[RMDB]
RNA sequence: GGGAACGACUCGAGUAGAGUCGAAAAGAAUGGCGAAAGCGAGGAGCUCCGGGUGGAUAUUUUAUCCCUGAACGUUCCGCAGGAAGCAUCCUUCGCGGGACCUGCACCGUGUUGGAUGCAAAAAGAAUUCUCGUUAAACUUUCGAGUUUAACGAGAAAAAAGAAACAACAACAACAAC
Reactivity to DMS in 0.01 (KOAc 150mM, MgCl2 10mM, bicine 150mM(pH8.5), 24C), signal-to-noise 1, nucleotides 027 to 126: g010a130a080u020g010g020c040g000a070a100a220g010c020g000a050g020g010a090g060c040u010c070c080g010g010g020u000g020g010a060u000a040u020u010u030u010a110u020c030c010c040u000g010a050a170c070g020u010u000c010c020g010c050a110g000g010a120a080g000c000a050u000c000c020u000u000c010g020c020g010g020g000a050c080c040u000g000c040a150c020c000g010u000g010u000u000g020g010a020u000g020c000a010a030a010a130a060g000a110a160